Notes: The record gives the reactivity of an RNA of 177 nucleotides to 2A3 and DMS. It was measured as part of the RMDB libraries RFM100 and RFMREP.
RNA sequence: GGGAACGACUCGAGUAGAGUCGAAAAGAAAGAAAGAAAGUGUGGCAAGUGAUGCAGAAGUUAAUAUUAUGCUAUACACUGAAACUUUUGUGGACAAAAAACUCCGCUUAUUAUCUGAUGCCACAAACGACAAAAUAAUUUUCGAAUUAUUUUGUCGAAAAGAAACAACAACAACAAC
Reactivity to 2A3 in 0.01 (KOAc 150mM, MgCl2 10mM, bicine 150mM(pH8.5), 24C), signal-to-noise 9, nucleotides 027 to 126: g070a000a030a010g080a030a080a010g090a080a060a040g110u060g000u000g030g000c020a030a030g020u010g040a030u050g010c010a000g020a090a000g060u090u150a110a070u110a110u300u130a040u080g010c030u050a030u060a180c020a010c040u060g020a060a060a050c010u050u040u060u060g010u020g020g000a020c080a030a250a030a030a040a030c040u020c010c000g010c030u060u080a060u060u030a020u120c070u080g060a060u080g000c000c000a010c000a000a060a010
Reactivity to DMS in 0.01 (KOAc 150mM, MgCl2 10mM, bicine 150mM(pH8.5), 24C), signal-to-noise 8, nucleotides 027 to 126: g000a130a080a070g010a080a080a090g010a070a070a060g020u010g020u000g000g010c020a060a050g010u010g000a150u020g010c020a010g000a060a090g010u020u040a060a090u030a070u020u010a070u010g000c030u010a110u020a220c040a070c050u010g010a100a080a080c080u000u000u010u000g000u010g010g010a060c070a000a080a090a090a110a120c270u000c010c000g010c040u010u010a040u010u010a080u010c050u020g000a120u010g010c000c000a020c030a030a040a150